[RMDB]
Chemical mapping of a 170-nucleotide RNA with 2A3 and DMS. Reactivities are rounded to 0.1 and cut off at 0 and 3. Source: RMDB library 15KLIB, as collected in RNAgym. 2A3 adducts were read by reverse transcription with SuperScript II with manganese. For 2A3, 33,159 sequencing reads were counted. Values cover nucleotides 27 to 129.

RNA sequence: GGGAACGACUCGAGUAGAGUCGAAAAAGGCCAUUCUCUAGCUAAGAAUAUCCUGCAUGUCGUAGGCCCAGAUGCCCGCGCUAAACAGGAUGUUUCUCUCCUUAGUAAGUGCUAUAAGGCUAUGAAUCAACGGGAAUGUUCGCAUUCCCGAAAAGAAACAACAACAACAAC
Reactivity to 2A3 in 0.01 (KOAc 150mM, MgCl2 10mM, bicine 150mM(pH8.5), 24C), signal-to-noise 9, nucleotides 027 to 129: a010g050g000c020c010a080u090u000c010u000c010u010a030g020c010u030a050a000g010a020a020u020a010u030c000c000u010g010c040a050u090g140u240c010g000u010a020g010g000c010c020c020a070g030a080u200g000c000c000c000g000c000g000c000u040a070a080a030c010a000g000g000a000u000g020u000u090u000c100u000c020u040c000c010u010u010a010g010u030a120a090g030u040g080c040u060a060u030a250a040g040g010c020u040a060u180g100a060a080u150c050a030a030
Reactivity to DMS in 0.01 (KOAc 150mM, MgCl2 10mM, bicine 150mM(pH8.5), 24C), signal-to-noise 5, nucleotides 027 to 129: a050g040g000c000c000a040u000u000c030u010c030u020a160g040c020u000a040a040g010a040a020u030a030u010c000c000u000g020c110a300u030g020u060c030g020u020a030g040g020c000c000c110a180g030a090u060g000c000c040c040g030c000g010c000u000a050a110a210c040a000g000g000a020u000g000u010u000u000c110u050c000u040c100c030u060u000a030g040u040a100a040g020u000g040c090u040a050u030a140a100g020g000c000u030a020u080g000a070a080u000c120a070a130